[RMDB]
RNA sequence: GGGAACGACUCGAGUAGAGUCGAAAAGAUAUGGACCUGAUGCCUUUUGGUAGCUUUUGACGCCUGUGCGUGUCGGAAACGACAUUAAGGGCGAUAAGCUACCAAAAGGCAUCACGGGUCCUAAGUCCUCAAGGAUUCACUUCGGUGAAUCCUUGAGAAAAGAAACAACAACAACAAC
Reactivity to DMS in 0.01 (KOAc 150mM, MgCl2 10mM, bicine 150mM(pH8.5), 24C), signal-to-noise 1, nucleotides 027 to 126: g010a110u010a210u010g000g000a020c000c000u000g050a000u010g010c000c000u000u000u000u000g040g000u020a000g010c000u010u010u000u000g040a190c020g020c000c000u000g000u010g060c300g010u000g000u020c000g000g030a120a100a240c000g030a030c020a020u000u000a090a110g010g010g030c000g000a130u000a010a000g000c020u010a010c000c000a000a000a000a000g020g000c000a000u010c010a000c160g000g030g000u000c010c010u000a040a110g010u000c050